[RMDB]
RNA sequence: GGGAACGACUCGAGUAGAGUCGAAAAAAAGAUAUGGAUGAUGCCUAAGUCGAACUACGAUCGGGCUUCGUCGGAAACGACGAAGUCUCUAGCGUGUCGCGACCGAAGUCAUCAUCCUAAGUCAAAACAUAAACCUGUUGUUCGCAACAGGUUUAUGAAAAGAAACAACAACAACAAC
Reactivity to 2A3 in 0.01 (KOAc 150mM, MgCl2 10mM, bicine 150mM(pH8.5), 24C), signal-to-noise 2, nucleotides 027 to 126: a000a000a000g110a050u130a050u160g020g000a000u000g000a000u000g000c010c040u050a060a030g020u010c000g010a050a040c030u120a010c290g090a090u160c080g050g000g000c000u000u010c020g000u000c010g000g000a090a090a020c000g000a000c000g020a020a000g000u000c020u000c010u010a040g070c020g030u080g000u050c180g000c000g230a000c020c000g050a110a020g000u020c000a010u030c000a010u000c010c000u010a080a010g020u030c020a010a020a060a110
Reactivity to DMS in 0.01 (KOAc 150mM, MgCl2 10mM, bicine 150mM(pH8.5), 24C), signal-to-noise 4, nucleotides 027 to 126: a050a090a130g010a050u000a300u010g000g010a020u010g020a010u000g010c030c000u000a300a160g010u000c000g000a170a020c060u020a070c010g010a080u020c300g000g000g010c020u000u000c000g020u000c000g020g000a090a050a170c000g000a010c020g010a010a000g010u000c010u000c070u000a080g010c040g020u000g000u010c170g000c030g020a040c000c020g020a140a120g000u000c010a010u000c010a010u000c000c010u010a000a090g000u000c030a080a080a130a190

The data come from the RNA Mapping Database (RMDB), library TTRDES.
An RNA of 177 nucleotides, treated with 2A3 and DMS and read out base by base.
Reactivities are rounded to 0.1 and cut off at 0 and 3.
For 2A3, 4,526 sequencing reads were counted.
Conditions: 150 mM KOAc, 10 mM MgCl2 and 150 mM bicine (pH 8.5), 24 C.
For DMS the reverse transcriptase was MarathonRT.
For DMS, 3,432 sequencing reads were counted.